[RMDB]
RNA sequence: GGGAACGACUCGAGUAGAGUCGAAAAGCACAACGUGGCUCAUGAGUUCGACGAGGCUGCCGAGUGCUUCCGCAAGGCAGUCGCGCUACACCCUGCUGACCCCAAGUUGUGGAACAAGCUCGGGGCCCAUAAGAUGCUCGUUCGCGAGCAUCUUAUGAAAAGAAACAACAACAACAAC
Reactivity to DMS in 0.01 (KOAc 150mM, MgCl2 10mM, bicine 150mM(pH8.5), 24C), signal-to-noise 3, nucleotides 027 to 126: g010c030a050c060a090a080c230g010u000g040g000c050u000c010a060u010g020a060g010u000u010c080g020a140c040g010a060g000g020c010u010g010c010c010g000a270g030u000g000c130u010u000c040c040g000c080a060a210g000g000c020a020g010u000c020g020c040g000c040u010a060c150a150c040c060c020u000g000c030u000g010a250c050c030c020c050a020a060g020u000u000g020u010g010g000a080a100c190a090a110g000c030u000c030g000g000g000g000c020c040
Reactivity to 2A3 in 0.01 (KOAc 150mM, MgCl2 10mM, bicine 150mM(pH8.5), 24C), signal-to-noise 3, nucleotides 027 to 126: g080c010a010c000a090a080c110g130u130g030g000c020u020c060a190u130g010a020g050u150u250c270g110a070c000g020a100g000g000c000u040g080c030c000g010a030g020u040g030c100u050u000c030c010g060c040a030a040g010g010c020a030g000u030c010g010c000g000c050u070a040c020a080c040c000c010u020g000c030u030g080a180c000c020c040c020a000a020g050u040u030g080u120g010g020a060a040c040a130a040g030c010u010c020g000g010g020g000c030c000